An RNA of 207 nucleotides, treated with DMS and 2A3 and read out base by base.
RNA sequence: GGGAACGACUCGAGUAGAGUCGAAAAAAAGAUGGGCUAAUGACAACACUUACUUUAUAGGGCCCUAGUGAGGCUCAAAUGGGAAAAUCCACGGAAAGCAUUUAGCACUGAUCAUGCAUGGAAAGUGCCUGAUAGCUGAUGGCACCUAUUGUAACUAUAAAUGAAUGCCAUUCGUGGCAUUCAUUUAAAAAGAAACAACAACAACAAC
Reactivity to DMS in 0.01 (KOAc 150mM, MgCl2 10mM, bicine 150mM(pH8.5), 24C), signal-to-noise 2, nucleotides 027 to 156: a040a030a010g000a060u010g010g000g000c030u000a100a080u000g020a190c040a030a070c020a080c050u000u000a050c090u010u000u010a080u000a120g020g020g000c010c000c010u000a070g040u010g020a100g010g020c000u000c030a030a060a040u000g020g000g000a060a060a060a130u020c050c030a050c060g010g010a100a070a060g030c020a050u020u000u000a130g010c020a030c040u010g010a110u010c050a050u010g000c050a120u000g010g010a070a100a060g030u010g000c000c030u000g010a090u000a080g050c060u000g010a110u010g020g030c030a050c020c020u010a060u010u010g010u000a040a250c030u000a240
Reactivity to 2A3 in 0.01 (KOAc 150mM, MgCl2 10mM, bicine 150mM(pH8.5), 24C), signal-to-noise 3, nucleotides 027 to 156: a000a000a000g040a040u050g000g010g010c040u030a070a010u090g040a050c030a110a080c040a070c050u130u240a030c000u170u220u150a160u130a120g010g000g010c000c010c020u000a010g030u020g030a040g010g000c010u030c030a060a080a000u100g020g010g050a030a100a010a150u060c040c000a030c040g020g030a070a030a030g030c020a030u080u100u090a020g000c010a020c070u050g040a050u050c040a030u090g060c010a030u030g020g080a180a130a020g020u010g010c000c000u040g010a050u070a090g110c060u030g030a040u020g010g010c050a010c030c000u090a070u050u120g050u020a060a070c030u020a040

Background: The reactions ran in a buffer of 150 mM KOAc, 10 mM MgCl2 and 150 mM bicine (pH 8.5), at 24 C. For DMS, 4,260 sequencing reads were counted. DMS adducts were read by reverse transcription with MarathonRT.